This 177-nucleotide RNA was probed chemically with 2A3 and DMS. Source: RMDB library TTRDES, as collected in RNAgym. The RNA was probed in 150 mM KOAc, 10 mM MgCl2 and 150 mM bicine (pH 8.5) at 24 C. For 2A3, 1,941 sequencing reads were counted.
RNA sequence: GGGAACGACUCGAGUAGAGUCGAAAAGAUAUGGAGUCGUGGAGAACUCGCGGUCGGAAACGACCGACCCGAGACCACUGGGACUCCUAAGUCAAACGUAUUUCCUACCUUCGGGUAGGAAAUACGACUAAUACGCACACUUCGGUGUGCGUAUUAGAAAAGAAACAACAACAACAAC
Reactivity to 2A3 in 0.01 (KOAc 150mM, MgCl2 10mM, bicine 150mM(pH8.5), 24C), signal-to-noise 2, nucleotides 027 to 126: g030a010u100a100u130g010g000a000g010u080c110g140u060g000g050a260g080a240a110c040u000c090g070c300g000g030u030c020g010g060a210a260a160c300g220a190c060c000g020a010c000c060c050g000a010g050a300c020c030a000c040u070g190g060g040a000c000u070c020c010u000a120a030g040u080c040a160a040a070c040g000u000a000u000u000u040c000c000u020a000c000c000u100u130c300g120g010g000u000a000g010g000a000a000a000u000a000c000g000a010
Reactivity to DMS in 0.01 (KOAc 150mM, MgCl2 10mM, bicine 150mM(pH8.5), 24C), signal-to-noise 2, nucleotides 027 to 126: g000a050u010a300u000g000g020a030g010u000c010g000u010g010g020a150g020a140a120c010u010c010g000c300g020g000u000c010g020g000a200a160a170c300g040a130c010c000g000a040c020c020c010g020a010g010a090c060c010a050c020u020g020g030g010a040c000u000c010c000u010a020a120g010u010c050a120a100a300c030g030u000a010u010u000u010c000c000u000a020c000c000u000u010c210g000g010g000u000a000g020g000a000a000a000u000a000c000g000a170